[RMDB]
RNA sequence: GGGAACGACUCGAGUAGAGUCGAAAACUCUCGAGGAGACUCGAGAGAGCAUGCUUCGGCAUGCAAGGGUCCGCAUGGCAACUCCACCUCCUCGCGGUCGGACCCAGGCAACCGAAGGAGGACGCACGUCCACUCGGUUGGCUUAGGGAGUGCCAAACAUCAUACUGGGGUUCGCCCCAGUAUGAUGAAAAGAAACAACAACAACAAC
Reactivity to 2A3 in 0.01 (KOAc 150mM, MgCl2 10mM, bicine 150mM(pH8.5), 24C), signal-to-noise 1, nucleotides 027 to 156: c000u000c000u000c010g030a020g000g030a090g050a060c000u000c000g000a000g000a000g000a000g000c000a000u010g000c010u080u040c220g130g000c010a000u000g000c010a040a040g000g000g000u000c000c000g000c010a020u110g000g000c080a140a090c040u000c000c000a000c000c000u070c000c030u080c030g010c030g020g000u010c020g020g000a000c010c000c010a010g050g000c010a000a010c010c010g100a090a070g130g070a230g030g000a010c010g100c120a070c190g010u010c010c000a000c000u010c010g010g000u000u010g060g000c000u020u010a000g000g010g000a000g000u020g010c000c000a020a010a000
An RNA of 207 nucleotides, treated with 2A3 and read out base by base. The reactions ran in a buffer of 150 mM KOAc, 10 mM MgCl2 and 150 mM bicine (pH 8.5), at 24 C. Reactivities are given for positions 27 through 156. For 2A3, 1,137 sequencing reads were counted.